This 177-nucleotide RNA was probed chemically with 2A3. Conditions: 150 mM KOAc, 10 mM MgCl2 and 150 mM bicine (pH 8.5), 24 C. Source: RMDB library OK1LIB, as collected in RNAgym.
[RMDB]
RNA sequence: GGGAACGACUCGAGUAGAGUCGAAAAUACGCACACAAAUUGAUUUAGGUAAAGAAGUCUUUGGUAUACCAGUAGAUAUUGCCUCACAACCUUUACCCACUACUCUCAUAUUAGAACUUGCAAGCUACAGUCAUGGUCACUUCGGUGACCAUGACUGAAAAGAAACAACAACAACAAC
Reactivity to 2A3 in 0.01 (KOAc 150mM, MgCl2 10mM, bicine 150mM(pH8.5), 24C), signal-to-noise 2, nucleotides 027 to 126: u180a000c040g020c040a020c000a020c000a020a270a230u000u080g050a090u080u080u150a040g050g000u070a050a060a000g010a060a010g010u000c010u060u030u020g030g030u080a080u010a090c000c050a040g040u030a000g040a100u070a090u070u210g090c000c000u020c010a030c000a000a040c000c080u030u000u080a050c000c000c010a010c000u060a030c040u050c000u010c040a040u010a100u180u120a010g040a050a050c020u010u140g020c050a020a020g010c040u090a130